Record summary
The record gives the reactivity of an RNA of 177 nucleotides to 2A3 and DMS. The reactions ran in a buffer of 150 mM KOAc, 10 mM MgCl2 and 150 mM bicine (pH 8.5), at 24 C. 2A3 adducts were read by reverse transcription with SuperScript II with manganese.
[RMDB]
RNA sequence: GGGAACGACUCGAGUAGAGUCGAAAAGCAGGCAGGCCUCAUCGAGGCUCAGGCUCAGCGCGGGGCGCUCCGCGAGAUCGUCGAGCGAUCUCGCCUGGUCCAGCUCGAAGCGGCCGACGCGGGUGCGCGAUAAAUUAGGUUUCGACCUAAUUUAUCGAAAAGAAACAACAACAACAAC
Reactivity to 2A3 in 0.01 (KOAc 150mM, MgCl2 10mM, bicine 150mM(pH8.5), 24C), signal-to-noise 9, nucleotides 027 to 126: g020c010a010g080g000c020a020g010g000c010c010u020c020a090u030c030g010a020g270g050c040u040c060a030g010g000c010u000c050a030g000c040g000c000g130g010g010g010c010g000c010u010c030c030g000c060g030a120g120a300u300c030g050u030c030g010a010g010c040g050a300u060c000u000c000g000c000c000u010g000g010u010c010c000a000g000c010u000c010g010a030a010g010c010g030g000c010c000g010a010c020g010c000g040g060g080u070g020c040g000
Reactivity to DMS in 0.01 (KOAc 150mM, MgCl2 10mM, bicine 150mM(pH8.5), 24C), signal-to-noise 9, nucleotides 027 to 126: g010c030a050g010g030c040a270g000g010c010c000u000c110a130u000c050g010a030g010g010c030u000c150a060g020g000c020u000c020a030g010c210g030c020g010g010g000g010c010g000c010u000c010c110g020c010g010a230g010a090u010c010g040u000c300g000a040g010c000g000a060u010c000u000c010g010c010c010u000g000g000u000c010c050a090g000c010u000c010g000a030a100g030c300g000g010c000c010g000a100c120g010c020g010g000g010u000g000c040g010